[RMDB]
RNA sequence: GGGAACGACUCGAGUAGAGUCGAAAAGAAUCACCGUACCUAUUUAGGUUUACGCUCCAAGAUCGGUGGAUAGCAGCCCUAUCACUAUCUAGGAGAACUGUGCUAUGUUUAGAAGAUUAGGUAGUCUAUUACACAGCCAUGUUCGCAUGGCUGUGAACGAAUUUCUACGAUUCGUCGUAGAAAUUCGAAAAGAAACAACAACAACAAC
Reactivity to 2A3 in 0.01 (KOAc 150mM, MgCl2 10mM, bicine 150mM(pH8.5), 24C), signal-to-noise 3, nucleotides 027 to 156: g060a050a030u180c030a020c100c010g020u030a010c000c000u040a100u210u170u180a050g030g010u020u070u110a030c030g000c010u000c000c000a010a000g020a030u070c130g040g120u010g180g140a000u020a000g050c070a000g010c000c000c000u020a020u000c000a010c000u000a010u000c000u020a060g040g000a000g030a010a040c080u100g020u030g060c020u050a030u140g110u050u110u040a120g040a220a020g020a130u090u000a030g000g060u030a020g040u020c070u060a190u080u200a070c000a000c000a000g020c000c010a010u010g030u050u070c140g000c090a000u000g000g000c000u000g000u000g000a000a000
Reactivity to DMS in 0.01 (KOAc 150mM, MgCl2 10mM, bicine 150mM(pH8.5), 24C), signal-to-noise 2, nucleotides 027 to 156: g030a100a050u010c060a300c050c030g010u000a060c070c000u010a180u000u010u010a050g010g000u000u000u010a010c040g000c030u000c010c010a170a080g010a050u000c050g090g020u010g020g020a040u000a040g000c030a250g010c280c130c000u010a070u010c020a030c030u000a060u000c030u000a210g010g000a110g000a060a120c000u000g030u000g010c010u000a080u020g000u000u000u000a090g010a130a130g020a120u000u000a060g000g020u010a090g030u000c070u000a100u000u010a220c010a030c000a000g000c010c010a020u010g000u000u000c260g060c020a070u000g010g000c010u000g010u000g010a020a060